[RMDB]
RNA sequence: GGGAACGACUCGAGUAGAGUCGAAAACGGCGGUGCGUGGACGGACAGCUCCAAGCGCCGCGAGGAGUUUUGUUGCCUGUUUGGCUGGAAACAUGGGGGUGUCGGUUAGCUGGGAGGUCCGGAACGGCGAUAAAUAAACUUUCGAGUUUAUUUAUCGAAAAGAAACAACAACAACAAC
Reactivity to 2A3 in 0.01 (KOAc 150mM, MgCl2 10mM, bicine 150mM(pH8.5), 24C), signal-to-noise 5, nucleotides 027 to 126: c010g030g000c000g000g000u010g010c010g010u020g020g010a010c000g030g050a040c030a040g010c070u000c000c010a010a010g000c020g010c020c000g000c000g000a040g000g030a090g000u020u030u030u030g080u050u070g010c000c030u050g040u050u070u090g020g000c000u000g030g030a050a040a020c050a100u120g020g000g010g010g010u040g020u030c020g020g020u050u070a010g010c010u020g010g000g010a010g000g010u000c000c000g010g010a040a020c020g030g000
Reactivity to DMS in 0.01 (KOAc 150mM, MgCl2 10mM, bicine 150mM(pH8.5), 24C), signal-to-noise 9, nucleotides 027 to 126: c050g010g020c010g000g020u000g000c010g010u010g000g010a030c040g010g020a130c180a240g000c140u000c000c010a050a080g000c000g010c000c000g000c010g000a060g000g000a160g010u010u010u010u010g010u000u010g000c050c030u010g000u010u010u010g010g010c030u010g000g010a080a060a070c090a070u020g010g000g000g000g000u010g010u010c050g000g010u010u010a070g020c040u010g000g010g010a070g000g010u000c040c020g000g010a060a080c080g010g000